RNA sequence: GGGAACGACUCGAGUAGAGUCGAAAAGAUAUGGAAUACGGUACUAACAGCAACAGCGUGUACGCGUAACAUCGAUCGGAAACGAUCGUGGCGUACACGACAUGCUGGACCUUCGUAUUCCUAAGUCGCGAUAACAGGUGUUCGCACCUGUUAUCGCAAAAGAAACAACAACAACAAC
Reactivity to DMS in 0.01 (KOAc 150mM, MgCl2 10mM, bicine 150mM(pH8.5), 24C), signal-to-noise 1, nucleotides 027 to 126: g030a010u030a300u000g060g000a000a020u010a000c060g000g070u010a000c020u010a050a300c000a000g000c000a020a100c300a130g010c010g010u000g000u010a000c000g070c000g010u000a030a080c160a030u040c040g010a030u000c010g020g020a150a170a300c000g000a060u000c000g010u000g000g000c000g010u000a000c000a000c000g000a000c100a280u000g000c040u010g000g000a260c300c120u000u000c000g020u000a000u000u010c000c030u070a010a300g010u000c150
Notes:
Chemical mapping of a 177-nucleotide RNA with DMS. The data come from the RNA Mapping Database (RMDB), library TTRINS. The reactions ran in a buffer of 150 mM KOAc, 10 mM MgCl2 and 150 mM bicine (pH 8.5), at 24 C. For DMS, 689 sequencing reads were counted.